[RMDB]
RNA sequence: GGGAACGACUCGAGUAGAGUCGAAAACCUUUUCUUAUGAUUCCCAGGAUGUUCCCCAGCCAGGGAUUUUCAUCCUCGAGUCUCUUGAUGGUCUUUCUGGCCUUCCGGAGGUCUCUCUCGAGCUCCUGUACUGACAAGUUCGCUUGUCAGAAAAGAAACAACAACAACAAC
Reactivity to DMS in 0.01 (KOAc 150mM, MgCl2 10mM, bicine 150mM(pH8.5), 24C), signal-to-noise 8, nucleotides 027 to 129: c010c020u010u010u020u020c070u020u030a110u000g000a100u000u000c020c020c010a110g030g010a060u050g020u010u000c050c010c010c050a050g060c120c080a070g040g000g010a030u030u020u020u030c050a070u000c080c020u010c070g030a120g030u040c000u010c000u020u020g020a010u000g040g010u030c000u030u090u060c160u070g010g000c070c030u050u000c040c050g000g030a020g020g020u020c020u010c040u000c030u000c030g030a030g000c080u010c000c000u000g010u050a120
Reactivity to 2A3 in 0.01 (KOAc 150mM, MgCl2 10mM, bicine 150mM(pH8.5), 24C), signal-to-noise 9, nucleotides 027 to 129: c000c000u030u070u060u040c070u070u200a180u140g060a070u040u030c000c000c000a000g040g010a030u060g030u050u030c000c000c000c000a010g050c030c020a030g030g020g010a020u110u040u020u050c020a030u020c010c010u010c040g030a030g050u010c000u000c000u020u030g010a020u050g030g020u000c020u040u260u070c170u220g050g000c010c000u020u020c020c030g040g000a010g020g040u010c010u000c000u000c000u000c010g010a010g010c000u020c010c010u040g060u110a130